This 177-nucleotide RNA was probed chemically with 2A3 and DMS.
For DMS the reverse transcriptase was MarathonRT.
For 2A3, 3,099 sequencing reads were counted.
Source: RMDB library TTRDES, as collected in RNAgym.
The DMS profile rests on 2,958 reads.
The RNA was probed in 150 mM KOAc, 10 mM MgCl2 and 150 mM bicine (pH 8.5) at 24 C.

RNA sequence: GGGAACGACUCGAGUAGAGUCGAAAAAAAAGAUAUGGAAGAUGCAGAGAAAGGUUACCCGAAGAACAAGUUCGGAAACGAACUUGGGAGGGUAAUCCUUUCGACGAAGCAUCUUCCUAAGUCAAAAUCCUGUUAUAUGGUUCGCCAUAUAACAGGAAAAAGAAACAACAACAACAAC
Reactivity to 2A3 in 0.01 (KOAc 150mM, MgCl2 10mM, bicine 150mM(pH8.5), 24C), signal-to-noise 1, nucleotides 027 to 126: a020a020a000a050g050a050u080a030u170g000g000a000a000g010a000u010g000c010a020g040a010g040a100a010a010g020g000u000u000a010c000c000c010g100a300a010g020a040a010c000a010a010g000u020u000c010g000g060a060a080a070c010g000a000a020c010u000u010g000g000g000a030g000g010g000u010a000a000u060c000c010u010u000u000c000g000a010c000g000a020a010g010c000a000u000c000u000u000c000c000u010a060a000g040u000c030a020a050a040a300
Reactivity to DMS in 0.01 (KOAc 150mM, MgCl2 10mM, bicine 150mM(pH8.5), 24C), signal-to-noise 3, nucleotides 027 to 126: a020a040a070a060g000a030u010a300u000g000g000a020a000g010a000u000g020c030a040g020a160g000a020a000a000g000g010u010u000a020c000c000c000g000a080a190g000a160a140c020a010a000g010u000u000c000g010g010a080a120a170c000g010a000a010c000u010u000g000g000g000a080g030g000g020u000a000a010u010c010c010u000u000u000c010g000a120c260g010a110a050g000c010a000u000c000u000u010c010c000u000a000a070g020u020c020a140a110a130a100